[RMDB]
An RNA of 177 nucleotides, treated with DMS and 2A3 and read out base by base. The reactions ran in a buffer of 150 mM KOAc, 10 mM MgCl2 and 150 mM bicine (pH 8.5), at 24 C. The data come from the RNA Mapping Database (RMDB), library OK2TRN. For 2A3 the reverse transcriptase was SuperScript II with manganese.
RNA sequence: GGGAACGACUCGAGUAGAGUCGAAAACUAGCUAGCGUACGUGCUCAUGGUCCAUGUGCGCGCGGUACAGUACCUAUGGUACCGCAGGAUCGUACGCUCUGCUAGACCAUGGUACGCUACAUGCACAGAUCAACCGUCGGUUCGCCGACGGUUGAUCAAAAGAAACAACAACAACAAC
Reactivity to DMS in 0.01 (KOAc 150mM, MgCl2 10mM, bicine 150mM(pH8.5), 24C), signal-to-noise 1, nucleotides 027 to 126: c060u000a040g010c040u000a030g000c000g020u000a010c010g000u000g020c110u010c020a050u000g010g020u030c180c030a110u000g000u000g000c010g000c090g000c020g010g000u000a030c020a130g000u020a090c020c110u010a120u000g040g000u000a000c000c000g050c090a100g070g000a090u000c010g000u000a040c040g010c000u000c080u000g020c070u000a080g020a100c020c020a020u000g000g000u000a020c030g010c000u020a060c050a090u010g000c120a100c250a060
Reactivity to 2A3 in 0.01 (KOAc 150mM, MgCl2 10mM, bicine 150mM(pH8.5), 24C), signal-to-noise 2, nucleotides 027 to 126: c000u010a000g050c030u010a010g050c000g000u000a010c000g030u060g120c030u030c090a070u000g110g040u130c090c010a100u110g020u000g030c020g000c000g020c020g000g000u000a010c000a020g060u170a180c000c060u180a160u300g070g000u010a000c010c010g000c010a000g050g070a100u120c010g000u030a010c030g040c020u030c020u090g030c020u010a010g010a000c010c020a030u080g030g030u070a040c050g090c050u070a050c070a090u140g040c040a070c040a080